Conditions: 150 mM KOAc, 10 mM MgCl2 and 150 mM bicine (pH 8.5), 24 C. The record gives the reactivity of an RNA of 177 nucleotides to DMS and 2A3. Reactivities are given for positions 27 through 126. DMS adducts were read by reverse transcription with MarathonRT. The DMS profile rests on 2,429 reads. 2A3 is a SHAPE reagent: it acylates the 2'-hydroxyl of flexible nucleotides of all four kinds. 2A3 adducts were read by reverse transcription with SuperScript II with manganese.
RNA sequence: GGGAACGACUCGAGUAGAGUCGAAAACUCGUCUGGUUCGCCAGACGAGAAAGAAAAUCCGAGCGAAGGGAAGGGCACAAACGCUCGGAGUGCCGAAACCCAAAACGUGGGGGUUCGCCCCCACGAACCAUUAGGUAUCCUUCGGGAUACCUAAUGGAAAAGAAACAACAACAACAAC
Reactivity to DMS in 0.01 (KOAc 150mM, MgCl2 10mM, bicine 150mM(pH8.5), 24C), signal-to-noise 3, nucleotides 027 to 126: c000u000c000g020u000c000u000g000g000u000u020c240g000c000c000a010g010a010c010g010a000g000a000a060a060g010a140a060a100a100u000c000c010g000a020g010c000g020a170a130g000g000g030a100a110g000g010g020c100a110c060a060a090a200c010g020c000u000c030g000g010a030g000u000g030c200c060g000a070a080a110c020c000c020a070a040a090a090c060g030u000g000g000g030g010g020u000u010c180g010c000c000c000c010c000a000c010g000a070a090
Reactivity to 2A3 in 0.01 (KOAc 150mM, MgCl2 10mM, bicine 150mM(pH8.5), 24C), signal-to-noise 4, nucleotides 027 to 126: c000u000c000g000u000c000u010g020g030u050u040c200g050c060c010a000g000a010c000g000a000g010a000a030a000g010a010a070a000a010u000c010c000g000a000g000c010g070a140a050g100g050g040a070a100g080g070g010c090a040c020a150a160a020c070g000c010u000c000g010g010a010g010u030g040c020c020g060a120a090a090c000c000c020a020a080a000a040c010g010u000g000g000g000g020g030u020u050c170g090c000c000c000c000c000a000c000g000a000a020